This 170-nucleotide RNA was probed chemically with 2A3 and DMS. It was measured as part of the RMDB library 15KLIB. For DMS the reverse transcriptase was MarathonRT. For 2A3 the reverse transcriptase was SuperScript II with manganese. For 2A3, 94,726 sequencing reads were counted.
RNA sequence: GGGAACGACUCGAGUAGAGUCGAAAACAAGUGUUAGGGCACAUUGCUGCGACUGUUAGAUUGCAAGCUGGUUCUAACACCGAGUUUGCCUCUAAUUCCUCGGUGUUGUCACUUGUUAACUUCACCGCUACCUCAAGGUUCGCCUUGAGGAAAAGAAACAACAACAACAAC
Reactivity to 2A3 in 0.01 (KOAc 150mM, MgCl2 10mM, bicine 150mM(pH8.5), 24C), signal-to-noise 9, nucleotides 027 to 129: c010a030a040g000u000g010u040u020a020g010g010g000c040a050c060a300u070u180g000c020u010g010c020g040a010c010u020g140u210u070a120g050a300u060u070g010c040a080a040g000c010u010g020g000u020u010c010u010a000a000c000a000c020c000g010a030g010u030u080u100g050c010c000u060c030u070a100a130u070u030c010c000u000c010g000g000u010g010u020u030g060u050c040a050c160u070u080g050u090u100a060a030c010u010u010c010a030c040c010g020c050u080a090
Reactivity to DMS in 0.01 (KOAc 150mM, MgCl2 10mM, bicine 150mM(pH8.5), 24C), signal-to-noise 9, nucleotides 027 to 129: c030a170a080g020u000g020u020u010a050g000g000g000c000a080c060a100u050u040g030c010u000g020c010g030a030c050u010g010u050u050a070g000a160u010u030g000c020a020a030g040c020u000g010g020u000u000c020u020a040a020c020a010c010c030g000a060g010u030u030u010g000c130c050u020c090u020a070a170u030u020c050c010u000c030g010g020u030g020u010u010g030u000c040a060c130u040u020g000u010u000a080a060c110u000u020c050a010c060c040g030c150u020a110